[RMDB]
RNA sequence: GGGAACGACUCGAGUAGAGUCGAAAACGGAGUUCGCUCCGCGAGUAUCCUAAGUCGUAAGUUACACCACUAAGACAGGUCAGUGGAGUCGGAAACGACGAUGAAACUGACUCGAGUGGUGGGCUUACGAUAUGGACAGAGGUCCCUUCGGGGACAACUUACCUAAUUCGUUCGCGAAUUAGGUAAGAAAAGAAACAACAACAACAAC
Reactivity to DMS in 0.01 (KOAc 150mM, MgCl2 10mM, bicine 150mM(pH8.5), 24C), signal-to-noise 3, nucleotides 027 to 156: c020g020g000a040g040u000u010c300g030c010u000c030c030g050c020g000a180g000u000a140u010c010c010u010a110a300g000u000c030g020u000a030a010g040u000u000a180c020a010c000c000a010c010u000a190a230g010a260c270a070g010g030u000c000a010g020u020g010g000a300g000u000c000g030g010a190a140a180c050g020a050c020g000a050u020g010a300a230a020c000u000g000a040c000u000c070g000a040g010u000g010g080u000g000g010g000c020u000u000a010c000g000a020u000a120u000g030g000a060c040a170g000a130g010g000u000c000c000c000u000u000c300g070g020g020g020a030c020a000a090
Reactivity to 2A3 in 0.01 (KOAc 150mM, MgCl2 10mM, bicine 150mM(pH8.5), 24C), signal-to-noise 5, nucleotides 027 to 156: c000g020g000a020g020u120u140c160g110c130u010c010c000g020c050g030a070g090u130a120u030c010c010u030a120a050g010u000c000g010u000a010a000g000u020u100a180c000a000c000c010a010c000u070a150a110g100a140c120a070g080g030u010c000a000g000u000g000g060a020g000u010c010g010g070a160a170a080c110g110a020c000g020a070u050g000a020a010a000c000u010g020a010c010u030c020g050a000g000u010g000g000u000g000g000g000c000u000u000a000c000g000a000u000a000u020g000g010a010c050a070g200a060g120g050u050c010c000c000u010u050c280g030g000g000g000a000c010a010a030